[RMDB]
RNA sequence: GGGAACGACUCGAGUAGAGUCGAAAAUGAGUGGGCUAGUUUCGGUGAGCGUUCGCGGUGCCGAAGCGAAAUUUAAGCGAACUCGCCUGAUACACAUCCUGUCGACGGGAGUUGUAUCCGGUUAAACUCAAAACAUCGACUACGCAUGUAGAAGCCUCCACUAUGUCAUGUUCGCAUGACAUAGUGGAAAAGAAACAACAACAACAAC
Reactivity to 2A3 in 0.01 (KOAc 150mM, MgCl2 10mM, bicine 150mM(pH8.5), 24C), signal-to-noise 4, nucleotides 027 to 156: u130g010a020g040u070g000g050g040c010u010a020g020u010u000u000c020g010g000u030g020a050g000c070g020u040u030c040g000c010g000g060u080g000c000c000g000a000a000g010c010g020a060a050a010u300u300u110a250a040g000c000g010a000a000c000u000c010g020c000c000u000g000a000u000a000c010a000c000a040u000c000c010u010g000u040c010g020a050c070g010g000g010a000g000u050u020g000u010a000u000c000c020g000g000u010u010a050a030a040c140u150c180a020a010a000a020c000a020u020c010g030a000c020u090a070c040g080c080a080u140g040u140a050g020a120a010g070c010c010u000